[RMDB]
RNA sequence: GGGAACGACUCGAGUAGAGUCGAAAAGAUAGGUGGGAGACUUUGAAGCAGCCACGCCAGUGGUUGUGGAGUCGCCGUUGAAAUACCACUCUGGUCGUGCUGGAUGUCUAACCUGGGUCCGUGAUCCAGAUAUAGUGACCUUCGGGUCACUAUAUCUAAAAGAAACAACAACAACAAC
Reactivity to 2A3 in 0.01 (KOAc 150mM, MgCl2 10mM, bicine 150mM(pH8.5), 24C), signal-to-noise 2, nucleotides 027 to 126: g050a040u180a040g000g020u010g060g070g010a150g000a020c010u260u300u130g050a090a040g000c040a010g000c000c000a010c010g060c040c030a050g000u020g050g000u010u010g010u040g000g020a010g020u020c000g030c030c010g040u080u130g050a040a030a060u110a050c000c020a020c020u100c080u030g050g000u000c040g030u070g020c020u020g060g120a180u130g050u040c060u060a070a090c040c010u040g050g020g030u040c060c050g040u070g040a020u040c050c000
Reactivity to DMS in 0.01 (KOAc 150mM, MgCl2 10mM, bicine 150mM(pH8.5), 24C), signal-to-noise 5, nucleotides 027 to 126: g010a120u000a060g020g020u000g010g000g000a060g010a030c010u000u010u010g010a180a220g000c010a000g010c020c010a010c000g020c110c170a190g020u000g000g020u000u000g000u000g000g010a030g020u000c020g010c120c230g010u000u000g000a070a070a070u010a060c030c020a050c040u000c120u000g010g010u010c060g010u010g010c040u000g000g010a070u010g000u000c030u000a120a130c090c030u010g000g010g010u000c020c120g000u000g010a070u000c040c050
The record gives the reactivity of an RNA of 177 nucleotides to 2A3 and DMS. 2A3 adducts were read by reverse transcription with SuperScript II with manganese. The RNA was probed in 150 mM KOAc, 10 mM MgCl2 and 150 mM bicine (pH 8.5) at 24 C. DMS adducts were read by reverse transcription with MarathonRT. It was measured as part of the RMDB library OK2TRN.